[RMDB]
RNA sequence: GGGAACGACUCGAGUAGAGUCGAAAAUAGCUAGUCUGGUGGUCUUCGCCAUCGAUGCGUUGAUGACGAGAAUCUUCAGGGAGUCGGGAAGUAUGAUGUCAAUGAAUUCACCGAAAUAAAGACAGGAACGUAGAGAGAGGUUCGCCUCUCUCUACGUAAAAGAAACAACAACAACAAC
Reactivity to 2A3 in 0.01 (KOAc 150mM, MgCl2 10mM, bicine 150mM(pH8.5), 24C), signal-to-noise 2, nucleotides 027 to 126: u100a000g040c020u030a020g050u050c020u040g040g050u030g000g030u040c030u100u090c070g000c000c010a040u030c020g050a040u120g000c140g070u060u030g030a040u030g020a000c010g000a000g030a060a020u000c000u000u030c040a040g000g050g000a050g020u010c010g020g000g050a040a000g020u040a080u160g120a030u110g080u060c030a050a070u040g070a050a060u080u030c090a160c130c080g050a040a030a050u180a020a060a050g070a020c070a030g090g020a040
Reactivity to DMS in 0.01 (KOAc 150mM, MgCl2 10mM, bicine 150mM(pH8.5), 24C), signal-to-noise 3, nucleotides 027 to 126: u000a120g010c030u000a090g020u010c020u000g010g020u000g000g010u010c040u000u000c030g000c010c000a030u010c030g010a060u000g020c120g020u000u000g010a030u000g000a020c030g000a040g010a050a080u010c030u000u000c050a060g010g000g000a080g040u000c060g000g010g000a070a060g000u020a040u020g000a090u000g000u000c080a070a090u000g010a120a110u000u000c030a100c030c030g010a050a050a120u010a050a070a090g000a060c090a070g000g010a140